An RNA of 207 nucleotides, treated with 2A3 and read out base by base. The 2A3 profile rests on 325 reads. It was measured as part of the RMDB library OK3TST. The RNA was probed in 150 mM KOAc, 10 mM MgCl2 and 150 mM bicine (pH 8.5) at 24 C.
RNA sequence: GGGAACGACUCGAGUAGAGUCGAAAAUUCAAGUGAUGAGCAGAUGUCUUGAGGACUUCAUAUUGUUCAGUCACGUUAGCCGAUAAUGAAGAUUUUUAUGCUGAAAUAUGUAACUAACCAAAGACUAUGAUCAUCAUUGUCGCGAUCCAUUCGAACGAUCCCUGCUUGGAUUCGUCCAAGCAGGGAUAAAAGAAACAACAACAACAAC
Reactivity to 2A3 in 0.01 (KOAc 150mM, MgCl2 10mM, bicine 150mM(pH8.5), 24C), signal-to-noise 1, nucleotides 027 to 156: u120u070c000a040a020g010u000g070a070u000g060a000g000c000a000g030a080u140g030u010c000u170u100g070a300g110g040a000c000u060u080c090a000u060a020u070u080g080u000u070c000a000g010u010c090a040c060g000u000u020a040g190c180c100g030a090u100a170a000u000g070a030a250g000a080u070u170u070u150u240a230u300g010c010u000g010a000a000a000u070a030u030g060u120a100a100c120u000a140a000c030c000a030a030a030g030a000c000u060a000u060g000a040u020c000a010u000c000a040u000u000g090u130c000g070c040g060a130u030c020c040a080u110u140c080g180a180a120c040g000